[RMDB]
This 177-nucleotide RNA was probed chemically with DMS and 2A3. It was measured as part of the RMDB library OK1LIB. For DMS, 42,710 sequencing reads were counted. High 2A3 reactivity points to a flexible backbone, as in loops and unpaired stretches.

RNA sequence: GGGAACGACUCGAGUAGAGUCGAAAACAAGCGCGUCAGGUGCUCCGGAUGUUUGGAGCCGCUUCGCACGCCGAGUCAGCCCCAGCGAAGGUGGCCUCCUGUGCGGCCAUACACAUGGAACCUGGCCUCUAGGGAGGGUGUUCGCGCCUUCUCUAGAAAAAGAAACAACAACAACAAC
Reactivity to DMS in 0.01 (KOAc 150mM, MgCl2 10mM, bicine 150mM(pH8.5), 24C), signal-to-noise 9, nucleotides 027 to 126: c060a130a110g020c100g000c060g000u000c050a030g010g010u010g000c030u000c000c010g000g010a140u040g000u020u020u030g010g000a040g000c030c050g010c010u010u000c110g020c050a050c070g010c020c030g000a070g000u000c030a120g000c140c010c010c030a120g000c070g000a040a030g000g010u010g010g000c020c010u010c010c020u000g010u000g000c060g000g000c010c020a030u010a110c110a060c130a130u030g010g000a120a090c090c030u000g000g000c020c040
Reactivity to 2A3 in 0.01 (KOAc 150mM, MgCl2 10mM, bicine 150mM(pH8.5), 24C), signal-to-noise 7, nucleotides 027 to 126: c030a030a020g070c020g010c020g040u020c010a010g000g000u020g030c020u000c000c000g030g040a110u070g090u060u060u100g020g010a010g010c000c010g000c000u020u000c000g000c020a020c020g010c010c020g000a010g020u020c020a010g000c000c000c000c000a010g030c010g040a070a010g030g040u030g010g010c010c010u020c000c010u030g020u030g020c010g000g000c000c000a010u040a020c040a000c000a030u050g020g000a000a010c000c010u000g000g000c000c000